[RMDB]
RNA sequence: GGGAACGACUCGAGUAGAGUCGAAAAUGGACCAAUGAUGAGUACCAUGGGGUAUCUGAAACAGGAUUUUUGAUUAAACCCAUAUGCAAUUCUGAGGUCCAUAAACAGUAGAACUUCGGUUCUACUGCUGAAAGUACACCUUCGGGUGUACUUUCAGAAAAGAAACAACAACAACAAC
Reactivity to DMS in 0.01 (KOAc 150mM, MgCl2 10mM, bicine 150mM(pH8.5), 24C), signal-to-noise 1, nucleotides 027 to 126: u000g000g020a060c000c000a000a280u000g000a010u000g000a300g000u000a000c300c110a000u000g000g010g030g030u060a000u000c010u030g000a000a010a000c010a300g030g000a300u010u000u000u010u010g000a030u010u010a030a180a060c000c000c000a030u000a040u000g000c000a000a110u000u000c000u000g000a300g010g010u000c000c000a040u000a030a070a200c000a010g000u000a000g000a030a000c000u000u010c240g040g000u000u000c000u000a000c000u000g000